RNA sequence: GGGAACGACUCGAGUAGAGUCGAAAACGACUCAGUUACGACUGAGUCGAACGCUCAUCUCAUGGAGCGCAAGACGAAUAGCUACAUAUUCGACAUGAGAAAACGCUACGCGUACGCGCGUAGCGAAUCGGUCCCGGUCAUUCGUGACCGGGACCGAAAAAGAAACAACAACAACAAC
Reactivity to 2A3 in 0.01 (KOAc 150mM, MgCl2 10mM, bicine 150mM(pH8.5), 24C), signal-to-noise 1, nucleotides 027 to 126: c010g020a000c000u000c000a000g020u020u060a080c260g060a000c150u000g000a010g000u000c000g000a010a000c010g000c000u000c000a150u000c020u010c000a000u010g010g000a000g000c020g000c200a130a000g050a080c000g000a000a000u000a000g050c050u260a050c100a180u060a050u000u040c000g040a000c030a000u000g000a000g020a010a010a000a000c000g020c030u030a030c000g020c000g020u000a000c230g000c000g000c010g160u000a000g000c000g000a000a050

Source information:
The record gives the reactivity of an RNA of 177 nucleotides to 2A3. The 2A3 profile rests on 683 reads. 2A3 adducts were read by reverse transcription with SuperScript II with manganese. Reactivities are given for positions 27 through 126.